[RMDB]
RNA sequence: GGGAACGACUCGAGUAGAGUCGAAAAUUGCCGCUGGGGACAGCCAGGCCUGGGCCUUGGUUUGGGAGAAGCAGUCCAAGUCUGCAUAUCAAAUAAAUGAUGGAGGAGAUGGGUGGUAGGACCUUCAUAAUCCAUUUACUUUCGAGUAAAUGGAUUAAAAAGAAACAACAACAACAAC
Reactivity to DMS in 0.01 (KOAc 150mM, MgCl2 10mM, bicine 150mM(pH8.5), 24C), signal-to-noise 9, nucleotides 027 to 126: u000u000g010c030c030g020c050u000g000g000g010g000a100c130a070g000c040c030a050g000g010c030c060u000g020g020g010c030c030u010u010g030g020u000u000u000g010g010g010a100g000a100a130g010c040a050g010u000c060c130a070a180g010u010c020u000g000c050a110u000a100u010c070a050a070a100u010a060a100a100u000g000a070u000g010g010a100g000g010a110g010a100u010g000g010g000u000g010g010u010a060g000g010a090c050c040u000u000c080a120
Reactivity to 2A3 in 0.01 (KOAc 150mM, MgCl2 10mM, bicine 150mM(pH8.5), 24C), signal-to-noise 5, nucleotides 027 to 126: u060u050g040c000c020g010c050u040g000g000g000g060a040c030a030g030c020c010a030g020g030c000c040u210g100g120g030c010c010u090u130g040g010u050u080u090g030g010g000a080g020a080a020g010c020a000g010u050c070c030a060a010g060u000c010u020g020c020a020u040a020u200c050a040a070a110u210a080a140a060u140g040a020u060g030g040a030g020g020a080g020a060u100g010g020g040u030g020g020u030a030g020g020a010c010c000u030u030c030a070
Structure probing data (DMS and 2A3) for a 177-nucleotide construct.
The 2A3 profile rests on 6,475 reads.
High 2A3 reactivity points to a flexible backbone, as in loops and unpaired stretches.
The data come from the RNA Mapping Database (RMDB), library OK2TST.
For DMS, 19,918 sequencing reads were counted.
Values are in units of 0.01, from 0 to 300, in steps of 10.